Structure probing data (2A3 and DMS) for a 177-nucleotide construct.
Values cover nucleotides 27 to 126.
The data come from the RNA Mapping Database (RMDB), library OK2TRN.
The DMS profile rests on 1,536 reads.
2A3 adducts were read by reverse transcription with SuperScript II with manganese.
RNA sequence: GGGAACGACUCGAGUAGAGUCGAAAAUAGACGAAGAUGCGUAUCACGUACACGUGAUUCUCCGUCAUCAUGUCGCUGUGGAGACGUCUCAUGUUCAGAUGCAACAGGUAGCCGAUCACCAAUAGGGAACCACCCCAUGAUUCGUCAUGGGGUGGUUAAAAGAAACAACAACAACAAC
Reactivity to 2A3 in 0.01 (KOAc 150mM, MgCl2 10mM, bicine 150mM(pH8.5), 24C), signal-to-noise 2, nucleotides 027 to 126: u130a010g060a000c010g090a080a010g030a070u030g060c070g060u060a120u080c020a050c070g070u240a160c300a000c140g020u000g050a020u020u040c090u020c060c050g040u140c000a010u020c000a050u290g020u000c020g000c090u010g020u040g070g070a060g000a020c020g000u050c000u030c030a020u010g020u090u040c070a080g060a300u110g000c030a050a040c060a070g020g040u040a040g020c000c000g000a150u000c010a000c020c030a070a020u170a110g070g010g040
Reactivity to DMS in 0.01 (KOAc 150mM, MgCl2 10mM, bicine 150mM(pH8.5), 24C), signal-to-noise 2, nucleotides 027 to 126: u000a100g010a050c010g010a040a080g000a030u000g000c060g020u000a040u000c030a060c070g030u000a120c260a070c070g040u000g010a030u010u000c050u000c080c010g010u030c000a060u000c140a100u010g010u000c020g020c060u000g020u000g020g000a080g000a090c070g010u000c030u000c030a110u010g000u000u000c040a170g000a120u010g000c050a050a030c050a050g010g010u010a070g000c020c040g000a110u000c030a080c050c030a040a160u040a090g030g010g010